[RMDB]
Chemical mapping of a 207-nucleotide RNA with DMS and 2A3. It was measured as part of the RMDB library RSTRND. For 2A3, 7,217 sequencing reads were counted.
RNA sequence: GGGAACGACUCGAGUAGAGUCGAAAAUCUAGACAGAAACGUCAUCUUAGUGGGGAACGUCUUAAGGCUGUCGCGACCUUAAGUUGUACAAUUGUGACUAGCUGAUCUUAAAACCCGUUGCUAGGUGUUAGGUAAAGCGAAAUUCUAAAGUAGCAACCCUCUCUUUACAGUUCGCUGUAAAGAGAGGAAAAGAAACAACAACAACAAC
Reactivity to DMS in 0.01 (KOAc 150mM, MgCl2 10mM, bicine 150mM(pH8.5), 24C), signal-to-noise 2, nucleotides 027 to 156: u000c060u000a050g000a180c040a080g000a030a100a100c060g020u000c020a040u000c080u000u010a140g040u030g000g050g060g010a120a140c030g000u000c000u000u000a030a020g030g030c000u020g000u000c060g010c030g010a060c000c010u000u000a020a040g010u000u000g050u000a120c100a080a110u000u000g000u000g000a080c030u000a170g020c040u000g000a250u000c010u000u010a020a020a040a040c020c000c030g000u000u000g020c020u000a040g000g040u000g020u010u000a040g000g000u000a060a200a060g000c010g000a090a060a150u000u010c170u000a040a010a060g030u000a040g010c040a010a060c100
Reactivity to 2A3 in 0.01 (KOAc 150mM, MgCl2 10mM, bicine 150mM(pH8.5), 24C), signal-to-noise 7, nucleotides 027 to 156: u050c020u040a030g040a040c040a030g150a150a150a030c070g040u030c020a080u050c080u140u170a090g020u170g030g010g000g010a050a020c020g020u010c010u000u010a010a000g030g010c060u110g090u060c010g000c010g030a060c000c000u010u010a010a030g020u070u090g060u080a100c110a100a080u110u120g010u010g000a000c000u000a000g000c010u010g020a070u090c010u010u020a020a020a010a030c000c000c020g000u000u010g000c000u000a000g020g000u000g010u020u030a010g010g020u030a060a040a010g000c010g040a030a020a020u180u070c070u150a030a030a060g040u000a010g000c000a000a000c000